The data come from the RNA Mapping Database (RMDB), library PDB130. An RNA of 207 nucleotides, treated with DMS and 2A3 and read out base by base. The RNA was probed in 150 mM KOAc, 10 mM MgCl2 and 150 mM bicine (pH 8.5) at 24 C.
RNA sequence: GGGAACGACUCGAGUAGAGUCGAAAAUCUAUUGUUAUUCGUAACAAUAGACAUGGGCGUGUGGCGUAGUCGGUAGCGCGCUCCCUUAGCAUGGGAGAGGUCUCCGGUUCGAUUCCGGACUCGUCCGCCAUCAGCUGUCAAGCUUCGGCUUGACAGCACGUGGUUAAUGUUUCGACAUUAACCACGUAAAAGAAACAACAACAACAAC
Reactivity to DMS in 0.01 (KOAc 150mM, MgCl2 10mM, bicine 150mM(pH8.5), 24C), signal-to-noise 3, nucleotides 027 to 156: u000c010u000a000u000u000g010u000u000a030u000u010c300g020u010a000a020c010a010a010u000a010g020a010c020a070u000g000g000g010c020g000u000g010u010g000g010c020g000u000a070g020u000c130g020g020u000a080g010c010g000c030g000c000u000c000c010c000u000u010a170g030c130a250u000g000g010g000a060g000a030g020g000u000c030u000c000c000g010g000u000u000c070g000a300u010u000c010c000g010g000a020c030u000c020g030u000c030c010g000c000c000a190u000c110a080g000c000u000g000u000c010a020a020g030c000u000u010c300g040g010c000u000u020g000a010c000a010g000c000
Reactivity to 2A3 in 0.01 (KOAc 150mM, MgCl2 10mM, bicine 150mM(pH8.5), 24C), signal-to-noise 4, nucleotides 027 to 156: u000c000u000a010u000u000g010u000u000a040u070u090c280g060u040a000a000c000a000a000u000a000g010a010c030a100u190g000g000g000c010g000u020g010u010g000g010c010g000u010a020g050u120c160g030g190u120a010g010c000g010c010g000c010u010c000c000c000u090u150a120g070c100a130u170g000g000g000a000g000a010g010g000u040c000u000c000c000g000g000u000u000c000g000a000u010u000c000c000g000g000a000c000u000c000g010u020c010c000g000c000c020a160u150c110a030g000c000u010g000u000c000a000a000g000c000u020u100c210g090g000c000u000u000g000a000c000a000g000c000